[RMDB]
RNA sequence: GGGAACGACUCGAGUAGAGUCGAAAAGGUUACUGGUUUUCCAGCUUAUGGAAGUUGGUGUCCACCUCAGAGUGUCACGGGAGACAUCAAUACUACUUUGAAUCCUAGCACAGUGUAUCUGAAUACAACAACGGACACUGAUCGUGUUACUGGAUUGCUCGUGGGUAAGGUUCGCCUUACCCACGAGAAAAGAAACAACAACAACAAC
Reactivity to 2A3 in 0.01 (KOAc 150mM, MgCl2 10mM, bicine 150mM(pH8.5), 24C), signal-to-noise 1, nucleotides 027 to 156: g090g000u140u080a010c010u010g010g110u000u110u190u150c040c050a030g010c020u110u070a040u100g020g040a040a000g000u030u030g020g000u000g000u030c010c000a190c000c010u070c090a140g130a090g160u190g050u140c040a100c290g000g000g000a070g020a000c030a000u000c000a000a000u040a150c000u040a060c030u220u070u000g060a060a000u000c000c000u000a000g000c000a020c020a040g000u000g000u060a050u040c030u160g000a060a000u200a010c190a270a080c120a200a000c240g000g050a000c000a000c010u130g030a280u120c130g040u030g050u020u000a090c090u030g070g000a020u010u000g020
Chemical mapping of a 207-nucleotide RNA with 2A3.
Conditions: 150 mM KOAc, 10 mM MgCl2 and 150 mM bicine (pH 8.5), 24 C.
Source: RMDB library OK3TST, as collected in RNAgym.
The 2A3 profile rests on 322 reads.
Values cover nucleotides 27 to 156.
2A3 is a SHAPE reagent: it acylates the 2'-hydroxyl of flexible nucleotides of all four kinds.